[RMDB]
RNA sequence: GGGAACGACUCGAGUAGAGUCGAAAAGAUAAUGUCUUCGGACAUUAUCCACGCCUAAAGGCUUUAAUUAAUUAGCUAAGCCUGCAAAUUAAAAUGGCAUUAACAACUGUCCAUUCGUGGACAGUAACAAGAGUAUCAACUUCGGUUGAUACUCUUGAAAAGAAACAACAACAACAAC
Reactivity to 2A3 in 0.01 (KOAc 150mM, MgCl2 10mM, bicine 150mM(pH8.5), 24C), signal-to-noise 4, nucleotides 027 to 126: g000a000u000a010a000u000g000u000c010u030u060c230g090g010a000c010a000u000u020a000u000c000c010a020c060g030c000c000u100a180a120a020g010g000c000u130u030u020a070a060u100u130a060a110u090u120a120g020c030u030a030a000g000c000c030u040g040c070a070a070a130u170u150a150a120a060a150u110g030g000c030a040u120u100a080a050c070a030a010c000u000g000u000c000c010a010u030u040c170g100u020g010g000a000c000a000g010u000a000a020
Reactivity to DMS in 0.01 (KOAc 150mM, MgCl2 10mM, bicine 150mM(pH8.5), 24C), signal-to-noise 4, nucleotides 027 to 126: g000a010u000a000a000u000g000u000c000u000u000c220g030g010a020c010a000u000u000a000u000c000c040a100c280g010c000c010u000a080a130a070g010g010c000u000u000u010a080a130u010u000a060a130u010u000a090g010c080u000a040a020g020c010c020u000g010c190a060a070a150u010u010a020a060a080a100u000g010g000c030a090u000u000a040a090c250a070a050c000u010g000u000c000c000a030u000u020c180g040u000g000g000a010c000a000g010u000a050a110